[RMDB]
RNA sequence: GGGAACGACUCGAGUAGAGUCGAAAAAUUACAAACUACUAUCACAAGCCUGAGGCUCUUCUUCCAUUGCAGGCUGUAGGUCUCAUCACUCCUUUCAGCGUUAUCGUUGGAGGAUUCCGUGGAGCCAAGCGGUGCCCUAUUUCGAUAGGGCACCGCUAAAAGAAACAACAACAACAAC
Reactivity to 2A3 in 0.01 (KOAc 150mM, MgCl2 10mM, bicine 150mM(pH8.5), 24C), signal-to-noise 2, nucleotides 027 to 126: a000u250u270a050c140a090a250a040c100u300a050c170u170a270u150c050a010c000a050a100g020c000c000u000g100a000g060g030c000u000c140u180u000c010u160u070c180c000a180u140u050g010c010a060g100g050c000u000g000u050a090g020g000u020c000u030c000a200u050c000a170c030u050c000c020u070u300u300c000a000g000c000g180u230u300a100u300c100g000u000u000g000g060a000g000g020a000u100u000c000c030g000u120g000g030a010g000c000c000a010
About this RNA:
Source: RMDB library OK1LIB, as collected in RNAgym. Chemical mapping of a 177-nucleotide RNA with 2A3. The RNA was probed in 150 mM KOAc, 10 mM MgCl2 and 150 mM bicine (pH 8.5) at 24 C. High 2A3 reactivity points to a flexible backbone, as in loops and unpaired stretches.